An RNA of 177 nucleotides, treated with 2A3 and DMS and read out base by base.
The 2A3 profile rests on 907 reads.
Reactivities are rounded to 0.1 and cut off at 0 and 3.

RNA sequence: GGGAACGACUCGAGUAGAGUCGAAAACUGCGCGAUAAGACUGAUCGUAUUCAGGCGCUGGCCGGUUGGGUUGCAGCACAGAUUGGUGCCGAUGUUAACCACGCUACUCGCGCCGGUUUGCUGUCCAUACCUCCACCCAGUUCGCUGGGUGGAGGUAAAAAGAAACAACAACAACAAC
Reactivity to 2A3 in 0.01 (KOAc 150mM, MgCl2 10mM, bicine 150mM(pH8.5), 24C), signal-to-noise 1, nucleotides 027 to 126: c030u020g020c010g040c000g090a050u040a230a020g050a070c030u020g050a010u040c060g130u180a150u130u040c010a030g070g000c040g060c030u090g030g000c050c070g000g110u040u060g060g000g030u000u090g000c080a010g010c010a070c000a080g200a250u090u140g190g000u000g030c040c010g070a060u140g050u120u080a020a010c000c020a000c080g000c050u030a030c010u000c030g020c010g000c000c000g020g020u010u000u020g060c020u050g040u070c000c020a000
Reactivity to DMS in 0.01 (KOAc 150mM, MgCl2 10mM, bicine 150mM(pH8.5), 24C), signal-to-noise 1, nucleotides 027 to 126: c000u000g020c030g000c010g000a020u010a140a100g000a180c060u000g000a000u010c300g030u020a150u000u010c000a040g000g010c040g020c130u040g000g000c000c070g000g000u000u000g020g010g000u010u000g000c190a160g020c010a020c040a160g020a180u020u010g010g010u000g020c000c020g010a060u000g000u010u000a060a050c030c040a080c090g010c020u010a050c150u000c010g000c060g000c060c030g030g010u000u000u000g000c160u000g000u000c030c050a160